Conditions: 150 mM KOAc, 10 mM MgCl2 and 150 mM bicine (pH 8.5), 24 C.
Chemical mapping of a 177-nucleotide RNA with DMS and 2A3.
For DMS the reverse transcriptase was MarathonRT.
As a SHAPE reagent, 2A3 marks flexible, mostly unpaired nucleotides at the ribose 2'-OH.
For 2A3 the reverse transcriptase was SuperScript II with manganese.
Reactivities are rounded to 0.1 and cut off at 0 and 3.
The 2A3 profile rests on 24,803 reads.
[RMDB]
RNA sequence: GGGAACGACUCGAGUAGAGUCGAAAACGCCAGUGGCAUGUGAUGCGUACGUUAUGUGCGGACUCGCAUCCUAUAAGCGUAGAUGCGAUGCUCGUAGAUGCGCAGGUGAGUAUCCCUGGUCCUAGCAUCUAGGCUUGGGCUUCGGUCCAAGUCUAGAAAAAGAAACAACAACAACAAC
Reactivity to DMS in 0.01 (KOAc 150mM, MgCl2 10mM, bicine 150mM(pH8.5), 24C), signal-to-noise 7, nucleotides 027 to 126: c220g000c010c000a060g010u040g000g010c170a030u000g010u010g010a090u010g010c010g010u000a030c090g010u020u030a050u040g010u010g010c010g000g000a080c080u000c000g010c000a000u000c090c050u000a080u010a090a150g010c230g000u000a040g000a020u000g000c000g010a050u030g010c060u000c010g010u000a020g000a060u000g000c000g000c030a040g000g010u020g010a140g000u010a080u010c010c000c000u000g000g010u000c020c020u000a080g000c170a120
Reactivity to 2A3 in 0.01 (KOAc 150mM, MgCl2 10mM, bicine 150mM(pH8.5), 24C), signal-to-noise 9, nucleotides 027 to 126: c060g020c010c010a040g030u140g100g010c110a030u040g050u070g050a080u040g030c000g020u010a030c040g020u050u140a090u140g050u050g000c000g000g020a010c010u000c000g000c000a000u000c000c010u080a070u030a090a080g100c120g070u050a010g010a020u010g000c000g010a020u160g020c040u010c040g010u020a030g010a070u020g000c000g000c000a000g000g070u050g040a050g020u040a030u030c000c000c000u000g010g000u000c000c010u010a020g020c020a060